RNA sequence: GGGAACGACUCGAGUAGAGUCGAAAAAUAAGUAAGUUCUUCAUAAGAGAACAUUUCCAUUACGAAUUCAGUCGCAAAUUGUAGAAUUAGCUACUCUACGAUUUAGUGAGCGUUAGUAACGUUGUAAAAAGAUAGGAUUUUUCGAAAUCCUAUCUUUAAAAGAAACAACAACAACAAC
Reactivity to 2A3 in 0.01 (KOAc 150mM, MgCl2 10mM, bicine 150mM(pH8.5), 24C), signal-to-noise 4, nucleotides 027 to 126: a000u180a060a040g200u080a120a040g020u000u010c020u070u030c030a080u140a190a100g050a000g000a020a000c010a010u010u040u010c000c020a030u080u120a020c040g100a040a110u160u180c100a080g110u020c020g050c030a000a000a020u010u010g020u000a000g000a030a010u040u020a050g020c040u050a020c020u000c010u010a000c000g010a000u020u000u070a100g010u020g030a020g060c020g020u040u110a020g040u070a120a000c080g020u010u020g040u050a110a140
Reactivity to DMS in 0.01 (KOAc 150mM, MgCl2 10mM, bicine 150mM(pH8.5), 24C), signal-to-noise 6, nucleotides 027 to 126: a070u040a040a110g020u000a070a080g000u000u010c000u000u000c050a100u050a190a300g000a010g010a000a010c000a110u010u000u000c010c010a280u020u010a070c070g000a130a090u020u030c110a080g000u010c010g020c020a020a020a010u000u000g000u000a000g010a010a010u000u010a140g000c160u020a110c100u000c000u000a000c000g000a020u000u000u010a100g010u000g000a050g020c040g000u000u010a070g000u010a050a040c210g000u000u010g010u000a040a060
Source: RMDB libraries RFM100 and RFMREP, as collected in RNAgym. The record gives the reactivity of an RNA of 177 nucleotides to 2A3 and DMS. DMS adducts were read by reverse transcription with MarathonRT. The reactions ran in a buffer of 150 mM KOAc, 10 mM MgCl2 and 150 mM bicine (pH 8.5), at 24 C.